About this RNA: Chemical mapping of a 207-nucleotide RNA with DMS and 2A3. For 2A3 the reverse transcriptase was SuperScript II with manganese. For 2A3, 1,546 sequencing reads were counted. For DMS the reverse transcriptase was MarathonRT. The reactions ran in a buffer of 150 mM KOAc, 10 mM MgCl2 and 150 mM bicine (pH 8.5), at 24 C.
[RMDB]
RNA sequence: GGGAACGACUCGAGUAGAGUCGAAAAGAGAAUAUUCAUUUUAAACAAAGCCUACAAAGUAAGUGUAGUUAACUAGUACAAGGUUGCAGGAUAUGAGAUCUAUACAGAGGACUGAAAUUUUAAAAGGUAGUAUCACUUACAAUAACAUUGAGAAAUAGUAAUCCUAAAUGUUCGCAUUUAGGAUUACAAAAGAAACAACAACAACAAC
Reactivity to DMS in 0.01 (KOAc 150mM, MgCl2 10mM, bicine 150mM(pH8.5), 24C), signal-to-noise 3, nucleotides 027 to 156: g000a130g000a160a170u000a070u000u000c040a140u010u030u020u000a030a100a130c020a070a080a200g020c070c020u010a150c070a060a070a130g010u000a000a100g030u000g010u000a120g010u000u000a070a080c100u000a050g020u010a040c030a070a060g020g020u030u000g040c040a100g020g020a070u000a090u010g010a130g010a040u010c050u010a100u010a080c060a120g000a090g020g010a100c040u000g010a030a060a120u000u000u000u020a010a050a030a080g010g010u000a080g010u000a070u000c040a010c030u000u000a070c050a040a090u000a070a080c050a120u000u000g000a190g010a050a070a050u000a170
Reactivity to 2A3 in 0.01 (KOAc 150mM, MgCl2 10mM, bicine 150mM(pH8.5), 24C), signal-to-noise 2, nucleotides 027 to 156: g060a000g000a040a080u100a070u110u080c050a060u040u090u070u110a070a030a000c050a010a040a030g000c000c000u020a040c040a000a100a020g070u080a010a010g000u040g040u030a010g010u040u060a040a020c040u020a010g090u110a030c050a110a000g020g020u040u040g030c020a030g020g070a000u010a050u200g040a040g000a020u000c000u020a020u020a020c050a050g090a030g010g050a000c000u010g040a030a080a050u110u140u050u080a070a120a000a010g030g000u010a020g000u020a010u070c000a000c040u010u030a010c010a030a050u120a040a000c050a020u040u090g000a020g060a050a000a110u300a020